[RMDB]
RNA sequence: GGGAACGACUCGAGUAGAGUCGAAAAGACGCCUGUGUGGCGAAGCGAGCAUGAGAAAGGGCCGCACAUUAAACAGUCCAUCUAGCGGCAAGAUGGAUUGCUCGCAAAAAGAUCCAUAUCACGGAGAGGUGCUAUUUACUUUCGAGUAAAUAGCACCAAAAGAAACAACAACAACAAC
Reactivity to DMS in 0.01 (KOAc 150mM, MgCl2 10mM, bicine 150mM(pH8.5), 24C), signal-to-noise 2, nucleotides 027 to 126: g030a150c140g000c000c000u010g000u080g000u000g000g010c000g000a100a090g020c020g000a030g000c000a110u010g000a300g030a090a110a040g010g000g020c000c010g000c000a010c090a120u030u020a040a150a120c100a120g000u010c070c000a000u010c000u040a160g020c000g020g040c000a080a040g000a140u000g030g020a040u000u000g000c010u000c000g010c000a060a030a100a120a040g000a110u000c020c030a150u040a060u080c180a050c140g030g030a010g010a120
Reactivity to 2A3 in 0.01 (KOAc 150mM, MgCl2 10mM, bicine 150mM(pH8.5), 24C), signal-to-noise 3, nucleotides 027 to 126: g050a010c080g110c000c000u100g030u020g000u030g110g010c040g020a080a020g010c000g000a000g000c000a020u030g060a010g100a130a150a030g150g060g010c000c000g080c000a040c010a070u220u240a030a100a060c020a070g070u010c000c000a000u000c000u020a030g080c050g080g000c110a020a000g000a000u010g000g000a000u000u040g000c000u000c000g000c030a130a000a000a000a000g060a020u000c010c000a050u090a050u190c060a040c170g030g000a030g010a010